[RMDB]
RNA sequence: GGGAACGACUCGAGUAGAGUCGAAAAUCACAAAGCGGAUUUGGCUCGGUUGGGAGAGGUCCAGACCGAACCUCUGGUAUUCCUGUGUCCGAGACACAGAAUUCGCACCAUAAACAACGGGAGAUUCAUGGAUCCCAUGAUUCGUCAUGGGAUCCAUAAAAGAAACAACAACAACAAC
Reactivity to 2A3 in 0.01 (KOAc 150mM, MgCl2 10mM, bicine 150mM(pH8.5), 24C), signal-to-noise 3, nucleotides 027 to 126: u110c010a010c040a120a170a010g000c000g000g000a020u010u000u040g020g000c000u000c000g010g000u050u090g000g070g000a090g010a040g060g190u150c060c000a040g050a030c000c070g120a020a060c000c010u010c000u000g060g030u070a110u050u080c000c020u060g030u040g060u220c000c030g100a030g070a010c170a000c000a180g070a040a000u000u000c000g020c010a020c010c020a050u140a160a100a040c080a120a060c070g000g080g000a050g010a090u070u110c010
Reactivity to DMS in 0.01 (KOAc 150mM, MgCl2 10mM, bicine 150mM(pH8.5), 24C), signal-to-noise 1, nucleotides 027 to 126: u000c070a030c120a070a210a000g030c030g070g000a000u050u010u000g010g000c000u000c000g000g000u000u010g000g100g000a030g020a020g020g000u030c000c000a180g000a060c150c070g000a120a070c260c230u020c000u000g030g000u000a100u020u020c000c000u010g000u000g070u000c000c060g000a020g000a020c000a060c210a050g020a000a000u000u030c000g060c050a080c140c060a020u000a070a110a150c240a070a010c090g000g000g000a080g020a210u000u000c030
Structure probing data (2A3 and DMS) for a 177-nucleotide construct.
Conditions: 150 mM KOAc, 10 mM MgCl2 and 150 mM bicine (pH 8.5), 24 C.
DMS adducts were read by reverse transcription with MarathonRT.
Source: RMDB library OK1LIB, as collected in RNAgym.
Reactivities are given for positions 27 through 126.
For 2A3 the reverse transcriptase was SuperScript II with manganese.
The 2A3 profile rests on 1,335 reads.